RNA sequence: GGGAACGACUCGAGUAGAGUCGAAAAAUUCAUUUUAUAGAGGCAAAAAAGCUUAUAAGCAAUAGGAAGCCAAAUAAAGAUGAGAUGAAGGACUUCUACGACACGAUAUACAUAAAAAGGAAAAGUGGUGCAACAUCAAGUUCGCUUGAUGUUGCACAAAAGAAACAACAACAACAAC
Reactivity to 2A3 in 0.01 (KOAc 150mM, MgCl2 10mM, bicine 150mM(pH8.5), 24C), signal-to-noise 1, nucleotides 027 to 126: a010u000u000c000a000u000u000u050u010a290u060a060g110a000g000g000c000a040a040a040a040a040a040g000c000u030u200a070u060a300a020g000c040a160a060u040a080g190g000a300a000g020c000c000a020a020a020u150a000a000a000g210a000u040g020a060g000a060u020g150a000a000g010g030a040c000u000u000c000u010a020c160g040a000c000a000c100g040a060u040a000u050a180c000a040u300a060a190a000a090a070g080g280a000a170a040a000g070u070g080